[RMDB]
RNA sequence: GGGAACGACUCGAGUAGAGUCGAAAAAGUGGCAGUUUUUCCGUGGAAACUGACAGGCAAAAAGGAAGGUCAUCGGACGAUACUUUGGAGAGACCACUUCAGUGUGGAGCCAACGAGGAUAUAACCACACAAUCCUUCCGUUCGCGGAAGGAUUGUGAAAAGAAACAACAACAACAAC
Reactivity to DMS in 0.01 (KOAc 150mM, MgCl2 10mM, bicine 150mM(pH8.5), 24C), signal-to-noise 1, nucleotides 027 to 126: a050g000u000g020g000c020a000g000u000u000u000u050u000c040c050g010u000g000g000a080a020a000c030u000g020a010c030a000g010g000c300a040a040a080a120a100g020g020a110a070g000g000u000c010a060u070c090g000g000a010c110g000a140u010a030c020u000u000u000g010g000a070g010a100g020a030c050c020a030c010u000u000c220a160g000u000g000u000g010g020a300g010c000c090a090a060c250g010a050g000g000a010u010a020u000a160a070c030c070a090
Reactivity to 2A3 in 0.01 (KOAc 150mM, MgCl2 10mM, bicine 150mM(pH8.5), 24C), signal-to-noise 2, nucleotides 027 to 126: a000g000u000g060g020c050a040g010u010u000u000u090u000c030c010g050u090g100g010a070a000a000c000u010g050a090c050a070g030g100c020a070a020a000a070a000g080g100a080a040g010g050u050c050a060u120c130g030g040a000c030g000a000u030a180c090u150u060u110g010g000a040g010a000g020a070c000c010a010c000u000u070c070a080g040u010g000u010g110g030a000g040c000c000a030a050c030g020a030g030g010a050u040a000u000a120a090c000c000a040